[RMDB]
RNA sequence: GGGAACGACUCGAGUAGAGUCGAAAAAGCGUGUGUGUCAGCCCAGCACUUGCUGCGUGGGAGGUGCAUUCCGGACGGACGCGUAUGGUCAGGUGUAGCAUUAUUAGUUCUUUGAGUCGGUACAUUUCAGGGCGCAUGUUCCAGAGGGUAGCAAGGGGUACAUAGUGACAUUCGUGUUAUUGUGUACAAAAGAAACAACAACAACAAC
Reactivity to 2A3 in 0.01 (KOAc 150mM, MgCl2 10mM, bicine 150mM(pH8.5), 24C), signal-to-noise 3, nucleotides 027 to 156: a000g040c040g010u030g000u020g000u010g020u030c020a010g030c000c000c000a000g000c010a020c010u040u140g010c040u010g000c010g070u030g010g000g000a020g000g000u040g000c010a030u070u010c010c010g020g010a020c040g010g010a020c000g030c010g030u040a050u080g030g000u010c030a020g000g000u030g020u030a010g000c020a000u010u030a020u030u070a060g020u040u040c030u060u050u080g030a020g010u020c020g010g010u050a030c020a080u030u040u100c030a040g000g020g010c010g000c010a030u030g020u040u000c010c000a000g010a020g010g010g000u010a010g010c010a010a030g020g000g000
Reactivity to DMS in 0.01 (KOAc 150mM, MgCl2 10mM, bicine 150mM(pH8.5), 24C), signal-to-noise 4, nucleotides 027 to 156: a080g010c030g040u000g050u000g020u010g020u000c020a110g020c020c000c020a220g000c020a070c050u010u000g030c060u000g020c050g010u000g020g020g000a060g030g030u010g010c020a160u000u000c050c020g000g000a110c040g010g010a070c050g000c050g030u000a080u010g010g000u000c040a070g010g020u000g030u010a080g010c030a090u000u000a100u000u000a090g000u000u000c040u000u010u000g020a110g020u000c020g000g010u000a050c060a120u000u010u000c050a100g000g020g020c040g000c050a080u000g010u000u000c030c040a120g000a130g000g020g000u000a060g020c060a040a080g010g000g010